[RMDB]
RNA sequence: GGGAACGACUCGAGUAGAGUCGAAAAGCGUACUACUCACCUCGGGUGAUAGGGAGUAACUGGUAGCUUACUCCCAAAUAGGAGUAAGCAAACAGUUACGAAGAACUAUCAUCUCUAGCGUGGGUGAGUAUCGCAAACUGGCUCUUCGGAGCCAGAAGCCUAAAUAGAAGUUCGCUUCUAUUUAGGCAAAAGAAACAACAACAACAAC
Reactivity to DMS in 0.01 (KOAc 150mM, MgCl2 10mM, bicine 150mM(pH8.5), 24C), signal-to-noise 2, nucleotides 027 to 156: g000c020g040u010a070c070u000a030c010u000c010a010c010c030u000c070g000g010g050u000g020a000u000a050g030g000g000a240g010u000a000a020c000u000g000g000u020a300g010c050u020u010a000c000u000c000c000c030a060a060a120u000a040g000g010a040g010u010a010a030g040c000a080a070a180c010a030g000u000u000a020c000g010a090a200g010a170a220c010u000a010u000c000a020u010c000u010c020u000a090g000c170g000u000g010g020g020u000g030a040g030u000a030u000c030g050c000a070a080a150c000u000g000g000c010u000c000u000u000c300g010g020a010g030c020c000a000g010a060a160
Reactivity to 2A3 in 0.01 (KOAc 150mM, MgCl2 10mM, bicine 150mM(pH8.5), 24C), signal-to-noise 5, nucleotides 027 to 156: g010c010g010u050a030c010u000a000c000u020c000a000c000c010u020c030g020g000g000u000g000a000u000a010g030g020g010a040g000u000a000a000c000u020g020g060u090a020g000c000u000u000a000c000u040c000c010c060a160a180a030u300a030g000g000a000g000u010a000a010g000c000a120a210a000c000a000g020u000u000a000c010g030a080a010g020a000a000c000u000a000u000c000a020u040c090u010c030u120a060g030c050g110u060g000g000g000u010g000a000g000u000a020u190c020g000c000a010a010a090c000u000g010g000c010u000c000u060u070c230g130g010a000g000c000c000a000g000a000a000